The record gives the reactivity of an RNA of 207 nucleotides to 2A3 and DMS. It was measured as part of the RMDB library OK3TST. For 2A3 the reverse transcriptase was SuperScript II with manganese. For DMS, 1,531 sequencing reads were counted. The RNA was probed in 150 mM KOAc, 10 mM MgCl2 and 150 mM bicine (pH 8.5) at 24 C.
[RMDB]
RNA sequence: GGGAACGACUCGAGUAGAGUCGAAAACAACCAUUUCAUGAGAUAAUAUUACUGGCCUCAUUUUAUAGACAAGAAAAUAGGGGCCAGGUGAUGACUCAUGCCUGUAAUUCUAGCACCUCAAGAGGUUGAGGAAGGCAGGCAGAUCACUUGAGCCCAGCCAAAGAUAGAUGUUCGCAUCUAUCUUUGGAAAAGAAACAACAACAACAAC
Reactivity to 2A3 in 0.01 (KOAc 150mM, MgCl2 10mM, bicine 150mM(pH8.5), 24C), signal-to-noise 4, nucleotides 027 to 156: c060a030a050c060c020a100u040u180u140c060a050u080g030a030g060a160u180a250a080u160a200u240u090a070c060u040g020g000c010c000u040c020a020u010u050u010u040a150u090a090g130a080c050a120a060g150a130a090a070a020u200a280g010g010g000g000c000c000a000g000g000u020g010a020u050g020a020c040u010c120a040u040g000c000c010u030g020u070a140a160u080u000c010u050a090g090c030a040c030c000u050c060a180a070g100a100g300g000u090u100g000a010g050g020a010a010g060g000c000a000g010g000c000a000g010a030u060c030a020c020u000u020g030a010g000c000c000c000a010g060
Reactivity to DMS in 0.01 (KOAc 150mM, MgCl2 10mM, bicine 150mM(pH8.5), 24C), signal-to-noise 1, nucleotides 027 to 156: c070a180a290c100c060a260u000u010u000c070a190u000g010a170g020a070u000a090a060u010a070u010u000a030c010u000g040g030c020c010u000c000a090u010u000u020u000a100u000a080g000a240c100a150a190g010a050a020a020a050u000a220g070g010g010g010c000c000a000g000g010u010g000a030u010g000a190c030u010c130a100u000g010c030c080u000g010u000a080a140u000u000c080u010a090g030c210a090c030c030u000c070a060a150g010a110g010g000u000u000g010a300g000g020a060a030g000g030c000a040g000g000c050a030g000a090u000c070a020c030u000u000g000a140g010c040c000c010a100g030